Chemical mapping of a 207-nucleotide RNA with 2A3 and DMS. The 2A3 profile rests on 912 reads.

RNA sequence: GGGAACGACUCGAGUAGAGUCGAAAAACUGGGCUCAAAGUAAGUACUGCAAAUAAUGCAUUAAAUGUAGAUAUCCAGCGCUGACGCGAACUUCGCAGUUUGAGACUGGUCAGGAAACAGACGAUGGAGAUCCCUAUGUGUGCUUCCGUAGAAGGGACAGUCAAACGAUUUUCGAAUCGUUUGACUGAAAAGAAACAACAACAACAAC
Reactivity to 2A3 in 0.01 (KOAc 150mM, MgCl2 10mM, bicine 150mM(pH8.5), 24C), signal-to-noise 1, nucleotides 027 to 156: a000c020u060g000g030g000c010u030c060a060a010a050g090u070a110a040g010u060a240c000u000g030c000a010a090a150u150a170a150u150g010c030a040u060u120a040a090a140u090g020u070a030g060a100u060a060u080c050c000a030g010c030g000c070u060g040a000c020g000c010g070a070a030c040u160u150c040g010c070a060g040u030u030u080g130a090g020a090c010u060g010g000u040c040a050g000g080a000a080a000c010a040g080a030c030g010a000u090g010g000a040g040a050u120c010c000c000u070a090u130g070u030g000u030g020c070u060u020c020c000g000u000a050g050a090a030g020g000g000a000
Reactivity to DMS in 0.01 (KOAc 150mM, MgCl2 10mM, bicine 150mM(pH8.5), 24C), signal-to-noise 1, nucleotides 027 to 156: a000c020u000g040g000g000c030u000c020a070a000a140g010u000a100a040g000u000a070c040u000g010c050a060a040a110u010a070a110u000g010c000a060u000u020a030a060a300u010g030u000a050g010a120u000a040u010c030c040a040g030c040g020c030u000g020a090c030g000c110g000a020a150c150u000u020c030g000c040a180g030u040u000u020g010a100g000a080c050u030g000g010u010c000a130g040g000a080a040a140c020a020g010a090c060g040a140u010g000g020a040g000a080u000c010c000c010u000a130u010g000u000g010u010g000c030u000u000c010c000g020u000a020g000a100a060g010g010g010a170
Description: The reactions ran in a buffer of 150 mM KOAc, 10 mM MgCl2 and 150 mM bicine (pH 8.5), at 24 C. DMS adducts were read by reverse transcription with MarathonRT.